Description:
Structure probing data (2A3 and DMS) for a 207-nucleotide construct.

RNA sequence: GGGAACGACUCGAGUAGAGUCGAAAACAGGUCGAGAGUGGUAAGGUAAUGAGUACAGAAGAGGGUGACAUAGACCUAUUGUCAGGGGCAGAGGCCCAAAAAGCGACUGGUGUAGACCCUGUACCUAAUGAAGACCUACCCGGUCAAGGUAUCAGCCUGACAGAUCUAAAUUCGUUUAGAUCUGUCAAAAAGAAACAACAACAACAAC
Reactivity to 2A3 in 0.01 (KOAc 150mM, MgCl2 10mM, bicine 150mM(pH8.5), 24C), signal-to-noise 4, nucleotides 027 to 156: c030a030g030g040u070c030g030a020g000a020g170u070g020g020u070a090a030g020g000u020a070a040u080g040a020g040u030a090c040a050g080a110a030g040a110g080g030g010u030g040a010c000a030u070a030g080a050c000c030u040a100u060u080g050u060c030a040g010g040g020g010c040a020g020a130g180g050c030c000c170a050a130a020a000a000g070c060g030a010c070u050g000g000u110g050u060a030g010a020c000c010c000u000g020u000a020c000c000u060a090a120u220g100a100a070g020a010c000c010u030a040c020c030c000g020g020u030c050a050a020g030g000u100a050u210c030a020g150c010c010
Reactivity to DMS in 0.01 (KOAc 150mM, MgCl2 10mM, bicine 150mM(pH8.5), 24C), signal-to-noise 2, nucleotides 027 to 156: c090a060g000g040u000c040g020a060g010a130g040u000g030g030u000a020a070g020g030u000a060a080u000g010a100g010u000a120c040a140g010a060a110g000a120g010g010g000u000g030a100c090a140u000a070g010a060c030c030u000a110u000u000g020u000c050a160g030g000g000g040c030a080g000a140g030g040c000c010c030a010a030a050a120a150g010c050g010a080c060u000g020g060u010g000u000a130g010a090c000c010c020u000g000u000a030c030c010u010a030a070u010g010a150a070g000a030c020c010u000a100c030c050c030g020g000u000c010a080a060g010g010u000a030u010c060a060g020c070c080

About this RNA
For 2A3 the reverse transcriptase was SuperScript II with manganese. Conditions: 150 mM KOAc, 10 mM MgCl2 and 150 mM bicine (pH 8.5), 24 C.